Chemical mapping of a 177-nucleotide RNA with DMS and 2A3.
Source: RMDB library TTRINS, as collected in RNAgym.
For DMS, 2,839 sequencing reads were counted.
The RNA was probed in 150 mM KOAc, 10 mM MgCl2 and 150 mM bicine (pH 8.5) at 24 C.

[RMDB]
RNA sequence: GGGAACGACUCGAGUAGAGUCGAAAAGAUAUGGAGUCCCGCAGAUACAAGAAACUUCUGGGAGAGUCGCUCUCGGAAACGAGAGGACUCAUCGAUCAGAAGUUUCUUGAGUAGGGACUCCUAAGUCCUCACAAUAAUGGUUCGCCAUUAUUGUGAGAAAAGAAACAACAACAACAAC
Reactivity to DMS in 0.01 (KOAc 150mM, MgCl2 10mM, bicine 150mM(pH8.5), 24C), signal-to-noise 2, nucleotides 027 to 126: g010a120u000a300u010g020g020a050g010u000c000c000c000g030c180a190g000a100u000a020c000a020a020g000a000a030a010c000u000u000c000u000g020g020g010a070g020a020g020u000c010g010c020u000c000u020c000g030g000a090a130a130c010g000a010g010a020g000g000a020c000u000c000a060u000c150g000a100u010c010a010g000a020a000g010u000u000u000c000u000u000g000a040g000u000a050g030g020g010a010c010u000c000c000u000a000a130g000u000c030
Reactivity to 2A3 in 0.01 (KOAc 150mM, MgCl2 10mM, bicine 150mM(pH8.5), 24C), signal-to-noise 1, nucleotides 027 to 126: g010a020u100a070u230g000g010a020g020u020c010c040c030g000c300a070g010a080u090a110c000a000a010g010a010a000a000c030u000u040c000u030g060g000g020a070g010a000g010u000c060g080c300u020c000u020c020g040g020a110a140a010c020g010a000g010a000g050g000a000c000u000c010a020u070c010g060a050u030c030a010g000a020a010g000u000u000u010c000u000u000g000a000g000u020a030g000g010g010a010c000u000c000c000u030a010a000g000u000c000